[RMDB]
RNA sequence: GGGAACGACUCGAGUAGAGUCGAAAAUCAGGAUAUUAUGUAGUCACCACUGUGGGUUUGCCAAGCACGAGAAUGAGUUAUAUUCUGACCUCAAGAUGAUAGAUGUUGACAUAACAGCCACAGAGCAUAGUAUUUUAGGGUUCGCCCUAAAAUACUAAAAAGAAACAACAACAACAAC
Reactivity to 2A3 in 0.01 (KOAc 150mM, MgCl2 10mM, bicine 150mM(pH8.5), 24C), signal-to-noise 3, nucleotides 027 to 126: u070c000a010g070g040a020u060a030u180u220a080u220g080u100a030g090u050c010a010c060c000a010c030u020g020u030g080g030g000u070u120u130g060c050c010a040a020g050c030a020c060g040a050g070a080a090u070g010a020g090u190u050a090u030a030u160u070c020u020g090a100c010c000u050c020a010a020g050a080u100g030a030u050a130g090a060u070g040u050u060g020a010c040a080u130a070a010c000a070g050c040c000a040c040a040g020a020g030c040a050
Reactivity to DMS in 0.01 (KOAc 150mM, MgCl2 10mM, bicine 150mM(pH8.5), 24C), signal-to-noise 5, nucleotides 027 to 126: u010c030a080g010g010a070u000a060u010u000a070u010g030u010a100g020u010c050a080c080c070a080c080u000g020u000g010g020g000u010u000u000g020c000c030a070a050g020c080a050c090g000a080g010a080a070u000g000a100g000u000u000a050u010a080u000u000c040u000g000a070c150c030u000c070a050a080g000a090u000g020a130u010a070g010a090u000g020u000u000g000a060c060a040u010a040a050c100a100g010c020c020a030c060a040g010a140g020c150a110